[RMDB]
RNA sequence: GGGAACGACUCGAGUAGAGUCGAAAACUGCGGGUAUACGCGGAAAAUUCGGUCUUGGUGAAGGUCGACUUAAUAAGUUUACUAUUGAAAAAUUGGCAUUAGGUUUAGCGCGUUAUUUAAAUGCCCAGCUGAUAACUUCUUUCGAGAAGUUAUCAGCAAAAGAAACAACAACAACAAC
Reactivity to DMS in 0.01 (KOAc 150mM, MgCl2 10mM, bicine 150mM(pH8.5), 24C), signal-to-noise 1, nucleotides 027 to 126: c050u000g020c090g000g040g020u000a070u000a030c050g030c040g060g020a030a070a080a110u010u010c030g000g000u000c010u010u000g040g000u000g030a030a070g000g010u000c010g010a020c080u000u000a030a040u010a120a090g000u010u010u000a040c050u000a130u000u010g000a070a090a110a090a070u010u000g010g000c030a040u000u000a120g010g030u000u010u010a080g000c020g000c030g030u000u000a120u000u000u000a020a060a100u000g000c000c000c020a160
Reactivity to 2A3 in 0.01 (KOAc 150mM, MgCl2 10mM, bicine 150mM(pH8.5), 24C), signal-to-noise 1, nucleotides 027 to 126: c030u020g000c060g020g060g040u040a070u030a070c040g000c000g010g000a170a040a030a020u140u100c000g070g000u020c010u020u140g270g030u170g120a040a010g020g030u000c010g020a000c020u060u060a060a060u110a160a000g020u000u050u140a060c020u060a070u180u030g040a080a080a010a160a180u110u130g040g000c030a020u000u000a030g050g030u050u070u130a040g040c020g020c000g050u000u000a040u030u260u050a070a070a020u010g020c000c000c000a040